[RMDB]
RNA sequence: GGGAACGACUCGAGUAGAGUCGAAAAGAAGUCGGGAUCAUUGCAGACAACAUAACACCUGUUUAUCCUCACGGAUUGAGAGUGCUCUAUGAAUCACUACCUUUUCAUAAGGCUGAAAAGGUUGUCAAAAUUCUGUCUUUUUCGAAAGACAGAAUUUAAAAGAAACAACAACAACAAC
Reactivity to 2A3 in 0.01 (KOAc 150mM, MgCl2 10mM, bicine 150mM(pH8.5), 24C), signal-to-noise 4, nucleotides 027 to 126: g100a060a000g050u050c040g020g000g030a030u030c020a060u040u160g010c030a010g020a060c030a090a010c010a070u090a300a130c010a010c020c010u010g040u070u110u040a040u020c010c010u040c030a020c060g000g020a030u020u090g030a040g010a010g060u040g000c010u000c010u040a110u090g090a090a050u100c020a010c050u020a020c010c010u050u020u000u000c030a040u080a220a140g230g000c070u010g000a000a020a000a000g030g000u000u050g030u010c010a020
Reactivity to DMS in 0.01 (KOAc 150mM, MgCl2 10mM, bicine 150mM(pH8.5), 24C), signal-to-noise 8, nucleotides 027 to 126: g000a100a090g020u000c060g000g010g000a110u000c070a070u000u010g010c080a070g010a060c070a080a130c090a040u000a040a100c080a060c040c020u000g000u000u000u000a060u000c020c000u000c200a120c230g000g010a050u000u000g000a070g000a080g010u000g010c050u010c040u000a070u000g000a130a070u010c110a090c050u000a040c010c000u000u010u000u000c000a040u010a110a120g010g010c250u000g000a000a010a020a020g000g000u000u000g000u000c160a080